Record summary
This 177-nucleotide RNA was probed chemically with 2A3 and DMS. For DMS, 2,833 sequencing reads were counted. For 2A3, 1,545 sequencing reads were counted. Source: RMDB library OK2TST, as collected in RNAgym. The reactions ran in a buffer of 150 mM KOAc, 10 mM MgCl2 and 150 mM bicine (pH 8.5), at 24 C.

RNA sequence: GGGAACGACUCGAGUAGAGUCGAAAAGUAGUCGUGCGGGUUCCAGGGCUUGUGCAUGCUCAGGUGCCGGUUCAGGUACUUCUCGACGACCGGUUCAAGUUCGUGCAGCAGCUGCAGGUCGGUCAGCUACGCAGCCAAUAUUCGUAUUGGCUGCGUAAAAAGAAACAACAACAACAAC
Reactivity to 2A3 in 0.01 (KOAc 150mM, MgCl2 10mM, bicine 150mM(pH8.5), 24C), signal-to-noise 1, nucleotides 027 to 126: g050u070a000g050u050c040g010u030g000c050g060g030g000u040u030c030c020a070g020g030g030c060u100u130g090u160g100c050a040u090g050c030u020c020a050g100g030u030g000c000c010g000g050u060u040c030a020g050g000u040a080c020u000u000c050u040c050g050a040c050g000a030c020c010g040g010u000u070c040a050a020g030u040u040c030g100u100g030c030a080g000c000a020g050c040u000g000c010a020g000g000u050c030g000g020u060c010a020g030c030
Reactivity to DMS in 0.01 (KOAc 150mM, MgCl2 10mM, bicine 150mM(pH8.5), 24C), signal-to-noise 2, nucleotides 027 to 126: g020u010a060g010u000c030g000u000g010c050g020g000g010u000u000c060c010a080g010g000g010c030u000u020g050u000g030c110a030u010g010c080u010c030a050g000g000u000g020c020c000g000g020u000u000c080a110g010g010u000a040c100u000u000c030u000c050g010a100c100g010a060c030c030g010g000u010u010c070a090a060g020u000u000c060g020u010g000c060a090g030c050a070g000c030u000g000c090a100g000g020u000c030g010g010u020c000a070g010c110